Conditions: 150 mM KOAc, 10 mM MgCl2 and 150 mM bicine (pH 8.5), 24 C. An RNA of 177 nucleotides, treated with DMS and read out base by base. For DMS, 1,343 sequencing reads were counted.
RNA sequence: GGGAACGACUCGAGUAGAGUCGAAAAGAGCUGAGCUGCUACCGCUACGCCGCAGUCAUCCACGCUCGACACUCCGGUACACCUCCACCGCAGGUCCUCGAUGUAGAGGCAUGGACCGACUUCGCCGAAGUAAACCUGCUUUCGAGCAGGUUUACUUAAAAGAAACAACAACAACAAC
Reactivity to DMS in 0.01 (KOAc 150mM, MgCl2 10mM, bicine 150mM(pH8.5), 24C), signal-to-noise 1, nucleotides 027 to 126: g010a100g000c000u010g000a130g020c060u010g010c050u010a050c080c060g000c080u020a100c080g010c070c060g030c090a030g000u010c050a130u010c080c030a060c110g020c020u020c030g000a150c180a090c060u000c060c000g010g020u010a030c120a100c050c020u000c010c040a050c100c070g000c070a050g040g000u000c020c010u000c050g000a100u000g040u010a060g010a120g000g000c090a070u020g010g000a080c040c010g010a070c070u000u020c040g030c040c020g000